[RMDB]
RNA sequence: GGGAACGACUCGAGUAGAGUCGAAAAUACGCCAAUUUCGAUUGGCGUAACACGCUAACCGGCCGAAAGGCAUUUUAUGCGUACGGUGGCGAAAGCCUAAAAACGCACUGUCAUUCGUGACAGUGAACACAUGAUCACCGUUCGCGGUGAUCAUGUGAAAAGAAACAACAACAACAAC
Reactivity to 2A3 in 0.01 (KOAc 150mM, MgCl2 10mM, bicine 150mM(pH8.5), 24C), signal-to-noise 2, nucleotides 027 to 126: u050a010c010g000c010c010a000a000u020u050u130c170g120a020u010u010g000g000c000g000u010a000a000c020a000c020g010c010u030a180a000c010c000g030g000c010c030g130a100a080a010g100g020c010a010u040u100u020u030a120u110g020c000g000u010a100c060g070g000u030g020g010c020g040a100a030a030g030c020c020u120a090a070a020a010a010c090g000c030a010c000u000g000u000c000a030u000u060c180g110u030g000a000c000a000g010u000g030a050a000
Reactivity to DMS in 0.01 (KOAc 150mM, MgCl2 10mM, bicine 150mM(pH8.5), 24C), signal-to-noise 2, nucleotides 027 to 126: u000a000c020g010c000c000a000a000u000u000u000c150g000a020u010u000g000g010c010g000u010a030a060c170a140c030g000c020u000a070a080c070c070g030g020c020c040g000a120a060a060g010g000c020a030u000u000u000u000a070u000g010c060g020u000a110c110g000g040u020g000g030c020g000a130a100a110g010c010c000u000a020a050a050a140a060c250g000c000a010c000u000g000u010c000a010u040u010c100g050u000g000a040c000a000g010u000g000a050a130